[RMDB]
Chemical mapping of a 177-nucleotide RNA with 2A3 and DMS. 2A3 adducts were read by reverse transcription with SuperScript II with manganese. The DMS profile rests on 2,023 reads. Conditions: 150 mM KOAc, 10 mM MgCl2 and 150 mM bicine (pH 8.5), 24 C. Source: RMDB library 15KREP, as collected in RNAgym.
RNA sequence: GGGAACGACUCGAGUAGAGUCGAAAACAAUUCUCUCUGGAACCACAACUAAUGUUGACAAAAUACGCCAGCUUCUCAAAGGUGUCACCCUUGACAAGUUGCGUGAUUAUUUAGCUGACUAUGACGUGGAAUCAUAUAAGUUCGCUUAUAUGAUUCCAAAAGAAACAACAACAACAAC
Reactivity to 2A3 in 0.01 (KOAc 150mM, MgCl2 10mM, bicine 150mM(pH8.5), 24C), signal-to-noise 4, nucleotides 027 to 126: c020a040a080u060u000c010u020c000u000c050u080g070g030a060a070c030c010a030c020a080a040c020u090a070a110u160g010u040u020g040a030c020a030a080a020a010u040a010c010g010c020c010a010g000c010u030u010c010u010c010a070a090a030g020g000u070g110u120c070a080c000c010c010u000u020g000a000c000a020a010g000u000u020g030c060g030u000g030a040u000u080a030u020u030u030a020g010c020u020g020a020c020u060a060u210g050a020c040g050u020
Reactivity to DMS in 0.01 (KOAc 150mM, MgCl2 10mM, bicine 150mM(pH8.5), 24C), signal-to-noise 3, nucleotides 027 to 126: c150a110a290u000u000c020u000c060u010c070u000g000g010a090a100c030c050a010c100a060a130c060u000a090a100u010g010u010u000g010a060c080a040a030a040a050u000a040c030g010c040c040a020g000c010u000u000c240u000c000a020a010a060g010g010u000g010u000c260a110c050c010c040u000u000g010a010c060a010a020g000u000u000g000c140g010u000g000a090u020u000a040u000u000u000a100g000c020u000g000a030c010u000a110u010g010a090c260g030u010